[RMDB]
RNA sequence: GGGAACGACUCGAGUAGAGUCGAAAACUGGAGCACUUAAACGGGUUUGAUGUUCGCUGGAAGCGUCUACUGAACGAUGACCGUUGCUUCUACAAAGAUGGCUUUAUGCUUGAUGGGGAACUCAUGGUCAAGGGCGUAGACUUUAACACAGGGUCCGCGAUAUCGAAGGAUUCGUCCUUCGAUAUCGAAAAGAAACAACAACAACAAC
Reactivity to DMS in 0.01 (KOAc 150mM, MgCl2 10mM, bicine 150mM(pH8.5), 24C), signal-to-noise 2, nucleotides 027 to 156: c030u010g000g000a140g030c010a050c070u010u000a040a030a100c070g010g010g020u000u000u040g020a070u000g000u000u000c020g020c020u000g020g000a100a150g020c160g010u000c040u010a190c050u030g020a190a090c060g000a230u000g000a050c040c060g050u010u000g010c170u000u020c020u010a100c030a050a070a150g010a250u000g000g000c010u000u000u000a120u030g020c020u000u000g010a190u000g020g030g030g030a050a060c030u000c090a080u000g040g030u010c040a090a140g010g010g010c160g030u010a040g000a060c010u000u010u000a030a050c060a060c060a110g000g010g000u000c010c010g010
Reactivity to 2A3 in 0.01 (KOAc 150mM, MgCl2 10mM, bicine 150mM(pH8.5), 24C), signal-to-noise 6, nucleotides 027 to 156: c040u050g040g010a020g000c020a010c050u110u110a080a070a060c050g020g000g030u030u040u040g050a040u070g030u150u230c080g030c100u070g040g060a090a020g050c020g020u000c010u030a050c040u080g160a070a020c030g110a170u200g010a010c010c010g050u020u030g020c050u010u000c010u040a100c030a040a100a020g100a070u090g030g000c030u100u240u210a120u300g010c020u030u020g010a020u040g020g030g010g010a010a020c010u040c110a080u080g000g000u000c010a020a010g040g010g000c010g000u000a000g010a010c000u040u060u050a070a020c040a010c020a040g000g000g040u010c000c000g000